[RMDB]
RNA sequence: GGGAACGACUCGAGUAGAGUCGAAAAGCUGAUGUGAUUCGUCACAUCAGCCGAUUUGAGGCUUCACUAGAAGCCAUUACUAGAUACUUACAAACAAUGUGUGGACGCUGCGGUUCGCCGCAGCGUCGCUUUACAACUCGUUCGCGAGUUGUAAAGCAAAAGAAACAACAACAACAAC
Reactivity to 2A3 in 0.01 (KOAc 150mM, MgCl2 10mM, bicine 150mM(pH8.5), 24C), signal-to-noise 1, nucleotides 027 to 126: g010c000u010g000a000u010g010u010g000a010u000u060c170g050u010c100a010c000a000u000c000a010g030c010c020g050a060u110u000u170g220a130g000g000c030u020u010c010a060c090u120a110g010a000a010g000c000c000a000u000u070a010c050u030a070g120a230u060a110c020u290u080a060c060a060a130a000c090a300a290u140g030u020g050u130g300g000a000c000g000c000u010g000c000g120g060u030u060c230g040c090c000g000c020a000g000c000g020u000c000
Reactivity to DMS in 0.01 (KOAc 150mM, MgCl2 10mM, bicine 150mM(pH8.5), 24C), signal-to-noise 2, nucleotides 027 to 126: g010c000u020g030a010u000g020u000g010a020u010u010c170g020u000c000a010c000a010u000c000a030g020c000c010g000a090u000u000u010g000a150g020g000c000u020u000c020a200c300u030a180g000a000a000g040c010c000a030u000u000a080c140u000a050g020a160u010a060c080u010u010a100c190a040a090a120c130a070a140u010g020u000g010u000g030g000a000c000g000c010u000g020c000g040g000u000u010c200g020c000c010g030c010a000g020c000g050u000c000